[RMDB]
RNA sequence: GGGAACGACUCGAGUAGAGUCGAAAAUUAAGCCGCAGCGUGUCUCCGCUUGUGCUGUAGUAGUCAAAAACGUAAUGGCCGUCGGAGUCGGCAAAGCGGGCCGGGAGGUCGUCGCCGAGCGGGACGAUAGUCUGGAGUGGUUCGCCACUCCAGACUAAAAAGAAACAACAACAACAAC
Reactivity to DMS in 0.01 (KOAc 150mM, MgCl2 10mM, bicine 150mM(pH8.5), 24C), signal-to-noise 2, nucleotides 027 to 126: u020u000a150a090g000c040c000g020c080a150g030c090g000u030g050u020c010u000c020c010g040c070u010u010g040u050g000c040u000g020u010a190g010u040a090g030u010c110a050a040a000a100a040c080g000u050a080a030u030g000g040c000c000g010u030c000g000g000a100g000u000c050g000g010c050a080a130a050g000c020g030g000g000c000c000g000g000g010a200g040g000u000c020g000u000c010g000c080c000g000a120g010c090g010g000g000a080c110g010a090